[RMDB]
RNA sequence: GGGAACGACUCGAGUAGAGUCGAAAAGGGUGAUGUCUCCUAACCUUUAUCAAUGGGGGCACUCGGUCGUGCUGUGGGUAGAACUUUUAUUUCGUGCCUACCUUAGACGCUUGUCGUCGGGAGUAUGUGGGACUGAUGAACUUCGGUUCAUCAGUAACAAUACUUCUGUAUUCGUACAGAAGUAUUGAAAAGAAACAACAACAACAAC
Reactivity to 2A3 in 0.01 (KOAc 150mM, MgCl2 10mM, bicine 150mM(pH8.5), 24C), signal-to-noise 9, nucleotides 027 to 156: g060g000g000u090g020a090u050g030u020c010u020c020c000u040a090a110c010c010u110u240u130a180u170c120a080a100u170g010g000g000g000g000c010a020c020u030c030g030g000u010c020g010u040g030c050u060g020u090g040g000g000u020a030g020a060a040c020u080u130u110u210a220u110u140u120c040g030u060g040c000c000u020a040c010c000u010u040a070g010a020c010g010c040u140u280g110u270c010g000u000c010g000g040g000a060g040u070a080u170g080u100g020g020g020a000c000u000g000a000u000g000a000a000c000u030u050c150g070g000u000u000c000a000u000c000a000g000u000a010a000
Reactivity to DMS in 0.01 (KOAc 150mM, MgCl2 10mM, bicine 150mM(pH8.5), 24C), signal-to-noise 5, nucleotides 027 to 156: g010g010g020u010g010a080u000g020u000c010u000c000c010u010a120a090c050c050u000u010u010a130u010c120a110a110u000g030g060g020g020g030c030a050c030u000c040g020g020u000c060g010u000g010c040u000g010u000g010g010g020u000a060g000a040a050c080u000u000u000u000a110u010u020u000c080g010u000g030c030c010u000a050c020c040u010u000a130g000a060c020g040c040u000u010g020u000c030g020u000c010g020g020g000a120g010u000a050u000g010u010g010g020g010a080c000u000g010a010u000g010a020a010c000u000u010c300g050g000u000u000c000a000u010c000a010g010u000a030a200